[RMDB]
About this RNA
This 177-nucleotide RNA was probed chemically with 2A3 and DMS. For 2A3, 1,843 sequencing reads were counted. Source: RMDB library OK2TST, as collected in RNAgym. For 2A3 the reverse transcriptase was SuperScript II with manganese. For DMS the reverse transcriptase was MarathonRT. Conditions: 150 mM KOAc, 10 mM MgCl2 and 150 mM bicine (pH 8.5), 24 C. The DMS profile rests on 1,707 reads. Reactivities are given for positions 27 through 126.

RNA sequence: GGGAACGACUCGAGUAGAGUCGAAAAGACCUCCGGGAGAAGACGGCAGCCCGGGAGAGAGGGGCUAUACCGGAUUGAAGGGCAACACUGGACCACAGGGACCUCCUGGCGUUGAAGGACCCCGCGACAUACUGCGCUAGUUCGCUAGCGCAGUAUGAAAAGAAACAACAACAACAAC
Reactivity to 2A3 in 0.01 (KOAc 150mM, MgCl2 10mM, bicine 150mM(pH8.5), 24C), signal-to-noise 1, nucleotides 027 to 126: g060a070c010c000u000c000c040g010g070g020a060g030a100a110g050a000c030g030g070c000a010g020c010c000c000g010g100g000a020g000a000g000a010g010g020g000g000c010u050a040u060a150c000c040g010g020a030u020u090g080a090a070g000g020g000c020a050a000c030a040c090u040g010g040a090c030c000a040c060a080g040g020g020a050c000c000u020c000c000u030g020g010c010g070u040u080g040a050a010g030g040a030c000c000c000c000g000c010g000a030
Reactivity to DMS in 0.01 (KOAc 150mM, MgCl2 10mM, bicine 150mM(pH8.5), 24C), signal-to-noise 2, nucleotides 027 to 126: g010a200c030c020u000c030c040g010g010g010a060g040a140a090g010a090c030g010g000c080a120g000c020c020c010g000g030g010a090g010a130g000a120g000g000g010g000c060u010a080u010a110c050c020g000g000a110u000u020g010a200a080g010g000g000c020a060a040c130a070c060u000g010g010a080c070c120a040c050a090g000g010g000a140c090c030u000c050c020u000g020g000c190g020u000u010g010a100a100g010g010a180c030c010c010c030g030c100g010a140